[RMDB]
RNA sequence: GGGAACGACUCGAGUAGAGUCGAAAACAGUAAAAGGUAACUUUGCAUCCGGUAAAAGGUCCGUUGUGACUAUGAGCAAUAUUUCCUGUCCCCAACGUGGAAAUGUCAGAGAGUGAAGUAGCCACAGUAACGCCCAAAGAUUCGUCUUUGGGCGUUAAAAAGAAACAACAACAACAAC
Reactivity to DMS in 0.01 (KOAc 150mM, MgCl2 10mM, bicine 150mM(pH8.5), 24C), signal-to-noise 1, nucleotides 027 to 126: c090a120g030u020a110a080a100a070g020g030u000a080a070c090u000u010u000g040c010a060u000c060c150g000g020u010a060a030a090a070g010g000u000c010c080g050u020u030g020u010g040a040c030u010a030u010g010a110g030c160a120a070u000a050u000u000u010c000c000u000g010u000c020c010c000c040a030a180c130g000u010g020g010a050a010a030u010g020u010c080a090g030a130g020a050g010u000g000a050a080g010u000a110g030c000c050a010c110a120g020